[RMDB]
RNA sequence: GGGAACGACUCGAGUAGAGUCGAAAAGGGACGCCUUUAGAAGAAGAGGCUAGGUGGUAUUCCGGUGUGGGGUACUUGGUAAUAUGUAACGCUAAUUGCAUAAGAUUGUAGGACGGAAUUUACAGUCAAAACGGUCCUGCGUUCGCGCAGGACCGAACAUGUGAGCCAAGUUCGCUUGGCUCACAUGAAAAGAAACAACAACAACAAC
Reactivity to 2A3 in 0.01 (KOAc 150mM, MgCl2 10mM, bicine 150mM(pH8.5), 24C), signal-to-noise 2, nucleotides 027 to 156: g010g010g050a000c070g030c020c010u090u110u090a220g020a300a020g020a060a000g010a040g060g000c060u040a030g000g030u070g000g040u050a100u030u050c100c070g000g000u070g040u070g020g010g010g000u030a050c010u000u030g050g040u050a100a050u040a080u050g050u000a040a030c030g000c130u030a080a080u110u020g010c010a010u040a150a010g050a050u040u020g030u060a010g100g070a040c060g020g000a040a020u080u080u040a070c030a000g020u010c010a040a020a020a010c000g000g000u000c000c000u000g030c000g040u020u060c190g010c000g000c100a000g040g020a000c000c000g000a000a000